[RMDB]
RNA sequence: GGGAACGACUCGAGUAGAGUCGAAAAUACUUAGUACGCGCGUAGUUGCAGGCAUUCCGGGUGCAGCAACUGACGCGGAAGACUUUUCCCAGAGUGUGCGCUUCAACUGGAGUGCUGAGUAGUGCACGAAUUGCACGUACGUUCGCGUACGUGCAAAUCGAGGAAUCUGAUUCGUCAGAUUCCUCGAAAAAGAAACAACAACAACAAC
Reactivity to 2A3 in 0.01 (KOAc 150mM, MgCl2 10mM, bicine 150mM(pH8.5), 24C), signal-to-noise 4, nucleotides 027 to 156: u110a000c040u040u050a000g000u040a030c030g010c000g000c020g090u020a020g000u020u000g030c040a090g120g000c000a020u100u090c100c170g260g030g030u010g000c010a010g000c000a010a020c010u080g150a040c020g000c000g000g000a010a010g060a020c010u060u040u050u040c000c000c000a020g020a030g090u110g000u000g010c010g000c020u030u070c040a110a100c060u120g070g050a080g080u060g030c010u010g010a010g020u030a010g010u000g010c000a000c020g030a090a120u020u000g000c000a000c000g000u000a000c000g000u000u060c200g000c010g070u000a000c000g000u010g000c000a000a000a000
Reactivity to DMS in 0.01 (KOAc 150mM, MgCl2 10mM, bicine 150mM(pH8.5), 24C), signal-to-noise 2, nucleotides 027 to 156: u000a060c040u010u000a090g020u010a130c060g030c000g020c040g030u000a070g020u000u010g020c000a120g010g020c040a050u000u000c040c300g000g060g180u000g020c000a300g000c030a040a010c020u010g010a030c020g020c010g020g000a100a250g010a190c100u000u000u000u000c000c000c000a210g000a090g010u000g020u000g000c020g020c020u010u010c000a060a040c060u000g000g000a180g020u000g050c000u000g000a080g040u000a060g040u000g000c020a050c000g010a090a150u020u010g020c050a000c000g020u000a000c020g030u000u000c300g060c010g000u000a000c010g010u000g000c010a010a020a040

This 207-nucleotide RNA was probed chemically with 2A3 and DMS. For 2A3 the reverse transcriptase was SuperScript II with manganese.